About this RNA: Structure probing data (DMS) for a 177-nucleotide construct. For DMS, 1,605 sequencing reads were counted. The reactions ran in a buffer of 150 mM KOAc, 10 mM MgCl2 and 150 mM bicine (pH 8.5), at 24 C.

RNA sequence: GGGAACGACUCGAGUAGAGUCGAAAAGAUAUGGAGAAGCUACCCACCGGGUUGAUGCAUGAACUACACUGAGGUGUCGGAAACGACAUGUAGGUGCAUGCAUCAACCCGAGGCUUCUCCUAAGUCACUUCAGAUCUAUGUUCGCAUAGAUCUGAAGAAAAGAAACAACAACAACAAC
Reactivity to DMS in 0.01 (KOAc 150mM, MgCl2 10mM, bicine 150mM(pH8.5), 24C), signal-to-noise 2, nucleotides 027 to 126: g000a130u010a180u020g010g000a050g000a010a010g000c020u000a100c040c040c030a300c030c010g000g000g000u000u000g010a020u010g000c000a020u010g000a020a060c070u020a300c010a030c040u000g000a190g010g010u000g030u000c000g000g040a120a100a130c000g000a000c000a000u020g000u000a210g000g000u000g000c020a000u000g000c020a000u000c010a000a000c010c000c000g000a000g000g000c000u000u000c000u000c000c000u020a000a130g000u010c150a130

Record summary
Source: RMDB library TTRINS, as collected in RNAgym. DMS adducts were read by reverse transcription with MarathonRT.